[RMDB]
RNA sequence: GGGAACGACUCGAGUAGAGUCGAAAAAUAUACCUUUGUUCAAAAGGCAAAGAAAAACCUCCUAAAUCUAUUAAUCGAACUUGAGACUGUAAAUUCCUCAUCUGUAAUAGCAGGCAGGUGGGGAGUUGGCGUCUAUAAAAUUCGUUUUAUAGACGCCAAAAGAAACAACAACAACAAC
Reactivity to 2A3 in 0.01 (KOAc 150mM, MgCl2 10mM, bicine 150mM(pH8.5), 24C), signal-to-noise 2, nucleotides 027 to 126: a000u040a000u020a030c010c010u070u000u000g030u050u290c070a090a090a010a050g010g000c040a030a020a020g100a000a130a040a000a100c020c020u010c030c000u110a140a090a050u020c030u080a070u020u270a210a050u150c080g030a060a080c060u020u140g050a040g030a110c030u050g120u210a000a180a000u060u000c000c000u000c000a050u000c000u000g010u030a040a180u090a290g220c210a040g160g200c000a010g030g000u030g000g000g000g000a000g000u060u000
An RNA of 177 nucleotides, treated with 2A3 and read out base by base. The RNA was probed in 150 mM KOAc, 10 mM MgCl2 and 150 mM bicine (pH 8.5) at 24 C. Reactivities are given for positions 27 through 126.